[RMDB]
RNA sequence: GGGAACGACUCGAGUAGAGUCGAAAAUGAUGGCUAAUGCCAUUUGCUCGGCUGUGCCAGUUGACUGGGUACCAACUGGGAGAACCACCUGGUCAAUCCAUGGAAAGGGAGAAUGGAUGACCACUGAUAACGCAGCCGUGUUCGCACGGCUGCGUUAAAAAGAAACAACAACAACAAC
Reactivity to 2A3 in 0.01 (KOAc 150mM, MgCl2 10mM, bicine 150mM(pH8.5), 24C), signal-to-noise 1, nucleotides 027 to 126: u200g000a010u000g000g000c100u190a300a150u260g000c000c000a010u010u000u010g030c010u000c050g000g100c000u000g030u070g100c040c000a000g010u000u000g070a030c010u010g050g070g030u050a030c000c000a000a020c000u020g000g020g010a170g070a070a060c000c050a000c020c010u030g000g010u000c000a010a110u000c010c000a000u010g050g030a160a110a100g050g000g020a030g000a070a000u000g000g000a000u000g000a000c000c000a000c070u000g060a010